[RMDB]
RNA sequence: GGGAACGACUCGAGUAGAGUCGAAAAGAUAUGGACGCCAAGGGAGCUCUGUCGGAAACGACUGAGCAUCGAUCUUGUGCGUCCUAAGUCAAAGCCUGUUGUCGAACUUCGGUUCGACAACAGGCAACCAAUGAAUUUUGUUCGCAAAAUUCAUUGGAAAAGAAACAACAACAACAAC
Reactivity to 2A3 in 0.01 (KOAc 150mM, MgCl2 10mM, bicine 150mM(pH8.5), 24C), signal-to-noise 2, nucleotides 027 to 126: g020a010u080a030u140g010g000a000c010g010c020c000a020a010g040g020g000a020g010c000u020c030u050g020u010c000g010g050a100a060a050c010g000a000c020u030g020a010g020c000a040u120c010g000a050u020c000u020u080g050u140g030c010g000u000c000c000u010a020a010g030u000c020a020a120a020g000c000c000u000g030u000u030g000u000c000g000a010a000c010u070u120c300g150g010u030u000c000g010a000c030a020a020c000a010g000g010c000a000a000
Reactivity to DMS in 0.01 (KOAc 150mM, MgCl2 10mM, bicine 150mM(pH8.5), 24C), signal-to-noise 2, nucleotides 027 to 126: g010a030u000a300u010g000g000a010c010g000c010c000a000a010g000g000g000a030g030c000u000c000u010g010u000c000g040g000a140a100a160c010g010a020c010u000g010a020g010c000a140u000c190g020a050u010c010u000u000g010u010g020c010g000u000c000c000u000a010a100g010u000c010a100a130a140g010c000c000u010g000u000u000g000u000c010g000a020a020c000u000u020c180g030g000u010u000c000g000a010c000a000a000c000a020g000g000c010a000a020